[RMDB]
This 170-nucleotide RNA was probed chemically with DMS and 2A3.
The RNA was probed in 150 mM KOAc, 10 mM MgCl2 and 150 mM bicine (pH 8.5) at 24 C.
Values cover nucleotides 27 to 129.
Reactivities are rounded to 0.1 and cut off at 0 and 3.
RNA sequence: GGGAACGACUCGAGUAGAGUCGAAAAUUUAUUCACUGGGGACGACAACUCUGGGGAGAGAAGGGAGGGUCGGAUGGGAAGAGUAAAUCCUACGGGAAUCCCCCGGUUCCCCUUAUGUCCAGCCCCUUACCUGGUGCCUUCGGGCACCAGAAAAGAAACAACAACAACAAC
Reactivity to DMS in 0.01 (KOAc 150mM, MgCl2 10mM, bicine 150mM(pH8.5), 24C), signal-to-noise 2, nucleotides 027 to 129: u010u060u000a030u040u010c000a030c110u000g000g000g030g020a170c150g000a000c130a000a000c140u060c000u010g000g030g000g000a060g070a000g040a080a020g000g000g060a190g050g030g010u030c030g030g000a020u100g000g040g010a000a090g010a010g000u040a050a020a110u020c000c000u010a070c160g000g080g000a240a220u080c000c110c000c040c000g090g000u000u000c000c010c000c050u010u050a040u020g000u030c020c020a010g060c060c000c000c000u130u000a000c080
Reactivity to 2A3 in 0.01 (KOAc 150mM, MgCl2 10mM, bicine 150mM(pH8.5), 24C), signal-to-noise 1, nucleotides 027 to 129: u000u000u040a080u140u190c030a000c080u060g000g000g000g020a000c000g000a000c020a120a050c060u000c040u060g000g000g000g060a010g000a000g060a000a150g090g000g080a150g050g000g010u100c040g000g000a030u090g030g070g000a000a030g030a040g110u150a000a020a120u000c000c000u020a000c010g090g000g050a000a010u010c020c010c000c000c000g080g000u100u000c000c000c000c000u000u200a050u030g100u000c000c000a120g000c000c000c000c050u020u020a010c000